This 207-nucleotide RNA was probed chemically with DMS and 2A3. Conditions: 150 mM KOAc, 10 mM MgCl2 and 150 mM bicine (pH 8.5), 24 C. For 2A3 the reverse transcriptase was SuperScript II with manganese. Source: RMDB library OK3TST, as collected in RNAgym.
[RMDB]
RNA sequence: GGGAACGACUCGAGUAGAGUCGAAAAAGAAACUUGGAACCUCUGUCAACAGCAGAUAACAGAAGGAACAUCAGUCCAAAUGCUUUAUGCAUUUCAAUACUGUAGAUGGCUAAGCCAUAUGUGGGCAUGUAAACGUGCAAUAGCCACAUCAGAAAAGAUCCUAAAAAUACUUCGGUAUUUUUAGGAUAAAAGAAACAACAACAACAAC
Reactivity to DMS in 0.01 (KOAc 150mM, MgCl2 10mM, bicine 150mM(pH8.5), 24C), signal-to-noise 1, nucleotides 027 to 156: a140g000a110a090a080c100u020u000g040g040a120a150c060c000u000c020u000g030u000c010a060a140c070a170g020c060a060g010a090u020a070a080c040a070g020a060a050g000g000a140a090c020a100u000c060a100g020u000c070c070a100a080a040u020g050c010u000u000u000a070u000g020c030a020u010u020u020c050a020a140u020a050c060u000g020u000a070g020a140u000g020g070c000u000a160a130g020c020c010a060u000a010u000g020u020g000g040g000c040a050u020g030u010a020a090a110c100g050u000g000c020a050a160u000a120g050c020c020a050c010a120u000c040a120g010a140a090a020a100g000
Reactivity to 2A3 in 0.01 (KOAc 150mM, MgCl2 10mM, bicine 150mM(pH8.5), 24C), signal-to-noise 3, nucleotides 027 to 156: a000g080a040a010a000c040u040u040g040g000a060a070c030c000u000c010u050g050u060c090a080a090c010a080g060c020a000g030a210u120a080a000c010a020g130a120a020g100g000a010a020c020a060u100c030a020g040u000c010c020a000a010a030u010g010c030u070u300u210a060u270g000c030a010u030u040u120c050a130a050u060a200c010u050g040u100a060g060a210u000g040g000c040u050a050a090g050c050c020a050u030a060u120g040u030g020g040g000c030a000u030g070u150a070a160a040c070g040u030g010c010a060a130u070a140g040c000c000a020c000a040u050c020a000g030a040a080a040a030g080